The record gives the reactivity of an RNA of 177 nucleotides to DMS and 2A3. For 2A3, 4,118 sequencing reads were counted. It was measured as part of the RMDB library OK2TRN. Reactivities are given for positions 27 through 126. 2A3 adducts were read by reverse transcription with SuperScript II with manganese.
RNA sequence: GGGAACGACUCGAGUAGAGUCGAAAAUGUUAGCACAUAGGGCGCCAAAGAGGCCUAAUUAUCUUGUCAUUUUACCAAUGACCAGUGUGAUAAACACCGAAAGGAUAAGAACGGUUCCUGAAGGGAAAACUACCUUCCUUUUCGAAGGAAGGUAGUUAAAAGAAACAACAACAACAAC
Reactivity to DMS in 0.01 (KOAc 150mM, MgCl2 10mM, bicine 150mM(pH8.5), 24C), signal-to-noise 7, nucleotides 027 to 126: u010g020u000u000a080g030c120a080c060a070u000a090g020g000g010c060g000c040c060a050a140a090g020a110g000g000c020c020u000a060a100u000u000a010u000c010u000u010g010u010c000a010u000u000u010u040a140c300c230a050a010u010g010a010c010c050a060g010u000g010u000g010a140u010a070a100a020c010a020c010c030g000a060a110a180g000g000a040u000a020a010g000a070a130c170g000g010u000u000c010c000u000g010a110a080g000g000g000a080a060
Reactivity to 2A3 in 0.01 (KOAc 150mM, MgCl2 10mM, bicine 150mM(pH8.5), 24C), signal-to-noise 3, nucleotides 027 to 126: u090g010u030u030a030g000c030a020c020a060u090a040g060g020g000c080g020c050c020a050a130a040g160a050g000g030c010c010u030a060a060u070u080a030u000c020u020u010g000u000c000a030u000u060u060u090a090c070c010a010a000u000g010a010c000c020a030g020u000g000u010g090a120u160a210a140a000c020a010c020c000g080a130a050a000g050g010a040u040a080a020g050a100a020c060g010g010u060u070c000c020u030g030a050a060g000g000g000a010a100